Source: RMDB library OK2TRN, as collected in RNAgym. An RNA of 177 nucleotides, treated with DMS and read out base by base. The DMS profile rests on 536 reads. DMS adducts were read by reverse transcription with MarathonRT.
RNA sequence: GGGAACGACUCGAGUAGAGUCGAAAAGAUGACUAUGUAGAGUUCUGUAUAUCAACAGUUGGUCGAAAGGAGCUGAGACGGAUAUUGGAGACCAAUAGAUGUAAAACUAAAGACUUACAAUUGUCUAUAAAACGGCAUGUUUCGACAUGCCGUUUUAAAAAGAAACAACAACAACAAC
Reactivity to DMS in 0.01 (KOAc 150mM, MgCl2 10mM, bicine 150mM(pH8.5), 24C), signal-to-noise 1, nucleotides 027 to 126: g010a180u030g000a020c000u050a080u000g020u000a070g040a050g000u000u000c040u000g010u000a100u020a180u020c020a130a180c100a240g030u000u000g000g000u000c010g010a230a200a060g000g000a180g030c060u000g020a090g000a110c080g060g000a060u000a170u020u000g020g010a300g000a020c040c000a010a030u000a020g020a060u000g000u000a020a040a070a210c180u010a090a140a080g000a010c030u000u000a020c090a070a080u000u030g000u000c010u010a120